[RMDB]
RNA sequence: GGGAACGACUCGAGUAGAGUCGAAAAGCCACUGAGACCUGGACAGGUUCCUUCUGUUCUCCAGGCCUGAGUUGCCCCAUCUAUGCAAUGGGAGCUGUCUCAGAGGGAGGAAAAGGGAAGUCCUCUGUCAAGCGGAAUAUUUCGAUAUUCCGCUUGAAAAAGAAACAACAACAACAAC
Reactivity to 2A3 in 0.01 (KOAc 150mM, MgCl2 10mM, bicine 150mM(pH8.5), 24C), signal-to-noise 2, nucleotides 027 to 126: g050c000c010a010c070u100g080a070g040a110c010c060u020g010g010a010c000a060g230g000u040u100c020c000u040u030c060u160g160u130u060c030u000c040c010a040g030g000c010c000u000g010a000g020u030u000g010c000c000c030c000a000u020c070u220a270u300g100c090a110a000u010g010g010g040a130g000c000u010g080u090c010u010c000a020g050a040g010g000g000a000g020g000a000a090a020a040g030g020g010a030a000g030u020c010c020u030c060u050g080
Reactivity to DMS in 0.01 (KOAc 150mM, MgCl2 10mM, bicine 150mM(pH8.5), 24C), signal-to-noise 3, nucleotides 027 to 126: g020c020c030a260c120u000g000a110g020a060c010c040u010g000g010a040c040a060g010g000u010u000c050c040u000u000c070u000g010u010u010c060u000c010c000a030g020g020c090c010u000g020a020g000u000u000g000c030c000c000c000a010u000c050u000a120u010g000c290a130a010u000g000g010g020a160g030c010u000g010u010c010u000c000a010g000a090g000g000g000a030g010g010a010a030a110a110g000g010g010a070a120g000u010c010c010u000c070u000g000